[RMDB]
RNA sequence: GGGAACGACUCGAGUAGAGUCGAAAAGAUAUGGAUCGUGGAAUGUCUUGGACCGGUAGGUCGGAAACGACCUGACCGCUAGACACCACGAUCCUAAGUCAAAGUAAGUCGGUUCGCCGACUUACAACUAUAUGCGCCUGUUCGCAGGCGCAUAUAGAAAAGAAACAACAACAACAAC
Reactivity to 2A3 in 0.01 (KOAc 150mM, MgCl2 10mM, bicine 150mM(pH8.5), 24C), signal-to-noise 1, nucleotides 027 to 126: g030a000u020a000u030g010g000a010u000c010g050u030g010g160a300a300u300g020u000c020u160u300g050g030a000c020c040g000g000u020a000g020g030u030c000g000g030a000a020a020c010g010a010c010c020u000g120a070c010c010g010c030u000a040g000a000c000a000c020c000a000c010g000a000u000c000c000u000a010a000g000u010c000a030a010a030g020u020a000a000g010u000c020g080g010u030u170c300g090c110c000g000a020c020u000u040a000c000a000a000
Reactivity to DMS in 0.01 (KOAc 150mM, MgCl2 10mM, bicine 150mM(pH8.5), 24C), signal-to-noise 1, nucleotides 027 to 126: g000a000u000a080u000g020g000a000u000c000g020u000g000g000a080a120u000g070u000c000u010u010g010g020a010c300c000g010g020u000a010g000g000u000c000g000g010a010a010a050c010g010a020c000c000u000g020a030c000c010g000c000u030a000g000a000c000a050c010c010a000c000g000a000u000c000c000u000a020a070g000u000c000a150a150a120g000u000a010a020g000u000c000g000g000u000u010c300g010c040c000g010a000c000u000u000a020c010a080a220